Chemical mapping of a 207-nucleotide RNA with DMS and 2A3. For DMS, 3,346 sequencing reads were counted. For 2A3 the reverse transcriptase was SuperScript II with manganese. Reactivities are given for positions 27 through 156.
[RMDB]
RNA sequence: GGGAACGACUCGAGUAGAGUCGAAAAUUUUUGUAUAUCCUCCAGUCUUCUGAGUCCAGAAUACAAAUUCAGCUGUGAAACUCAUUUCUAACUCCUAUAGACUACCUUAGAGUCUGGAUUUGCAUAACAGAUUUUUUUCAUGGUUAGACAUGGAAGGCAUGUAUGUACUCUUCGGAGUACAUACAUGAAAAGAAACAACAACAACAAC
Reactivity to DMS in 0.01 (KOAc 150mM, MgCl2 10mM, bicine 150mM(pH8.5), 24C), signal-to-noise 2, nucleotides 027 to 156: u000u000u010u010u040g010u000a110u000a110u000c020c010u000c070c030a160g020u000c030u010u000c040u000g020a070g020u010c030c040a110g000a210a110u000a070c030a060a040a090u000u000c060a040g010c110u010g030u010g000a120a070a120c050u010c060a090u000u010u000c040u010a070a140c140u000c030c030u030a140u010a080g010a130c020u000a110c060c020u000u000a080g010a080g010u000c000u000g030g000a110u010u000u000g040c050a090u000a100a140c080a070g030a000u020u000u000u000u020u000u020c020a080u000g010g000u000u030a110g000a120c030a050u000g000g000a020a030g010g010
Reactivity to 2A3 in 0.01 (KOAc 150mM, MgCl2 10mM, bicine 150mM(pH8.5), 24C), signal-to-noise 3, nucleotides 027 to 156: u070u070u020u070u040g030u040a170u000a020u100c010c000u010c000c010a050g030u020c020u110u030c020u140g030a030g040u030c070c040a040g040a070a060u120a100c080a070a170a050u060u120c040a020g040c050u060g020u050g130a060a060a060c050u050c040a020u020u070u030c030u020a020a070c020u040c030c000u070a100u030a160g060a110c030u080a140c050c030u060u080a060g000a000g110u020c020u020g030g000a070u030u040u180g040c010a020u030a150a040c010a040g070a120u060u010u100u030u010u060u070c020a040u040g030g020u060u120a030g020a040c040a140u050g030g000a030a020g090g000